[RMDB]
RNA sequence: GGGAACGACUCGAGUAGAGUCGAAAAUUAAAGAGUUUCCAUUAACAAAUCCAGUAAUUGCGAUCGGCAAUACAACCUCCCAUCUUGGUUGACUUAAAGGUUCCAUAGGAACCUGGAAGCUAAAAAAGCUGAUAAUUAGAUUCGUCUAAUUAUCAGCAAAAGAAACAACAACAACAAC
Reactivity to 2A3 in 0.01 (KOAc 150mM, MgCl2 10mM, bicine 150mM(pH8.5), 24C), signal-to-noise 1, nucleotides 027 to 126: u190u130a200a120a050g120a040g000u010u030u030c030c000a010u080u030a050a110c010a060a110a050u180c060c010a050g080u120a110a170u060u020g000c000g120a270u120c200g300g000c010a040a010u060a090c080a120a120c040c000u010c000c000c000a030u000c040u000u000g000g030u010u000g030a030c030u020u030a000a000a000g000g010u010u000c010c010a200u180a300g000g000a000a000c010c000u000g000g060a010a030g000c040u090a130a140a020a010a000a000
Reactivity to DMS in 0.01 (KOAc 150mM, MgCl2 10mM, bicine 150mM(pH8.5), 24C), signal-to-noise 2, nucleotides 027 to 126: u000u000a100a080a210g000a160g010u010u000u000c020c000a250u000u000a120a090c090a080a120a080u020c060c040a110g000u000a060a040u000u010g000c000g000a140u000c180g030g010c010a020a020u000a070c050a090a160c060c060u000c020c010c050a110u010c100u000u010g000g070u000u000g010a080c060u000u000a070a140a030g000g000u000u000c010c000a080u010a160g000g000a010a000c000c000u000g000g000a050a070g020c030u000a000a000a140a070a050a080